[RMDB]
RNA sequence: GGGAACGACUCGAGUAGAGUCGAAAAAGCGUAGCGGUACGCCGCUACGCAAGGCGCAUUUGAACUGUAUUGUACACCUUGCAUAAAGCAAAAGUACUAAAAAAACGUGCCGUUACGACGGCACGAAAAAACAUCCAUUGGUUCGCCAAUGGAUGAAGUAUCUAAUCCGCUUCGGCGGAUUAGAUACAAAAGAAACAACAACAACAAC
Reactivity to 2A3 in 0.01 (KOAc 150mM, MgCl2 10mM, bicine 150mM(pH8.5), 24C), signal-to-noise 2, nucleotides 027 to 156: a000g010c010g000u000a000g040c000g040g000u020a040c230g050c030c030g060c050u000a000c000g030c010a010a020g050g000c030g020c050a090u040u100u300g120a140a130c050u090g000u120a110u170u070g000u010a030c000a030c010c040u000u030g010c040a100u100a300a170a100g050c000a010a010a050a080g030u020a010c060u200a000a000a000a000a000a050a050c010g000u000g000c000c000g000u020u030a050c290g000a000c010g080g010c000a000c000g000a020a000a000a030a000a000c000a000u000c000c000a000u020u010g010g020u040u050c170g000c080c010a010a000u000g000g000a000u000g000a000a000
The record gives the reactivity of an RNA of 207 nucleotides to 2A3. The data come from the RNA Mapping Database (RMDB), library M2RFPK. For 2A3 the reverse transcriptase was SuperScript II with manganese. Conditions: 150 mM KOAc, 10 mM MgCl2 and 150 mM bicine (pH 8.5), 24 C.